[RMDB]
RNA sequence: GGGAACGACUCGAGUAGAGUCGAAAAUUCCAGGAUUCAAGGCUUGUUUUGUAUACGGCAGUCAUGUCAUUUUUGUUUGGUUAUUUGCGCUUCGGAUUUUUGAGUCUUUUCAUUAUUAUGGCUGUUACUAAUCCGACUAGUUCGCUAGUCGGAUUAGAAAAGAAACAACAACAACAAC
Reactivity to DMS in 0.01 (KOAc 150mM, MgCl2 10mM, bicine 150mM(pH8.5), 24C), signal-to-noise 1, nucleotides 027 to 126: u000u000c020c000a180g000g010a090u000u010c070a090a090g030g020c060u010u000g000u000u000u000u000g020u010a110u000a090c150g020g020c020a030g010u000c100a070u010g010u060c070a120u010u010u000u000u020g010u010u010u000g010g010u010u010a090u010u000u000g010c090g010c040u000u000c080g000g020a040u000u010u010u000u020g010a060g000u000c020u000u010u020u000c020a070u010u000a080u000u000a080u000g000g030c050u000g000u010u010a140